Structure probing data (DMS and 2A3) for a 177-nucleotide construct. 2A3 adducts were read by reverse transcription with SuperScript II with manganese. The data come from the RNA Mapping Database (RMDB), library OK2TST. The RNA was probed in 150 mM KOAc, 10 mM MgCl2 and 150 mM bicine (pH 8.5) at 24 C. For DMS, 10,524 sequencing reads were counted. For 2A3, 6,196 sequencing reads were counted. For DMS the reverse transcriptase was MarathonRT.
RNA sequence: GGGAACGACUCGAGUAGAGUCGAAAACGCCGCGGUUUCCUCCUGCCCGUUGACCAGCACGCGGACAGUGCCGGGCUGGGCGUCCGCGGGUAUGGUGAGGGCCUCCACCGGUGAGAGGGUGCGGAGCAGCGUAUUCUAUCUUCGGAUAGAAUACGCUAAAAGAAACAACAACAACAAC
Reactivity to DMS in 0.01 (KOAc 150mM, MgCl2 10mM, bicine 150mM(pH8.5), 24C), signal-to-noise 5, nucleotides 027 to 126: c130g010c010c020g020c050g010g010u000u010u010c050c020u010c030c040u010g000c000c000c000g010u010u010g000a040c010c010a030g020c020a030c020g020c010g000g000a040c040a150g030u010g030c030c010g010g000g030c140u010g000g000g010c050g010u010c010c030g020c010g000g000g020u000a020u010g010g010u010g000a170g000g000g010c010c040u000c030c040a160c080c060g010g030u010g020a100g010a100g010g000g020u010g010c050g010g000a100g010c200
Reactivity to 2A3 in 0.01 (KOAc 150mM, MgCl2 10mM, bicine 150mM(pH8.5), 24C), signal-to-noise 4, nucleotides 027 to 126: c050g020c010c020g000c050g100g060u030u150u120c000c020u010c000c010u030g020c000c000c010g080u060u130g120a030c000c000a010g010c050a010c030g110c030g000g040a020c060a100g160u180g200c020c020g070g110g030c050u110g080g040g010c040g040u010c000c010g000c070g010g000g000u130a300u120g010g010u030g040a060g010g020g000c000c000u060c010c010a140c030c040g080g020u090g040a160g000a010g010g020g030u070g010c040g010g030a020g040c050